[RMDB]
RNA sequence: GGGAACGACUCGAGUAGAGUCGAAAAGUGCGACAUUUCGAUGUCGCACAAACCCAAAAGGUGGCACCUAACUAAACAAGCCGGGAAAAGCCAGAUGCCAACGUCCUUAGCCCUUCGGGGCUAAGAAUAGACUGAUACUGUUCGCAGUAUCAGUCUAAAAAGAAACAACAACAACAAC
Reactivity to 2A3 in 0.01 (KOAc 150mM, MgCl2 10mM, bicine 150mM(pH8.5), 24C), signal-to-noise 2, nucleotides 027 to 126: g000u000g000c000g010a010c000a000u070u060u060c190g090a010u050g000u000c000g020c000a000c000a000a000a010c020c000c000a020a140a000a030g030g000u020g000g050c070a300c200c020u020a070a050c030u110a040a120a160c040a140a040g040c010c020g010g040g010a050a100a000a000g030c040c030a050g010a060u070g010c010c000a040a020c010g050u050c020c000u010u020a000g000c000c010c030u040u120c250g040g000g000g000c000u010a000a000g010a000a000
Reactivity to DMS in 0.01 (KOAc 150mM, MgCl2 10mM, bicine 150mM(pH8.5), 24C), signal-to-noise 2, nucleotides 027 to 126: g020u000g020c000g010a010c010a010u000u010u020c210g010a020u000g010u000c010g020c000a000c000a010a060a110c000c000c000a120a070a130a060g010g000u000g000g020c010a070c000c010u010a070a130c050u020a040a070a120c090a090a120g000c070c050g000g000g000a040a080a110a100g010c030c060a050g010a060u020g010c050c020a030a090c080g000u000c110c000u000u000a000g010c000c000c000u000u000c170g030g000g000g020c000u000a000a000g000a120a100
Chemical mapping of a 177-nucleotide RNA with 2A3 and DMS. For DMS, 1,607 sequencing reads were counted. DMS adducts were read by reverse transcription with MarathonRT. The RNA was probed in 150 mM KOAc, 10 mM MgCl2 and 150 mM bicine (pH 8.5) at 24 C.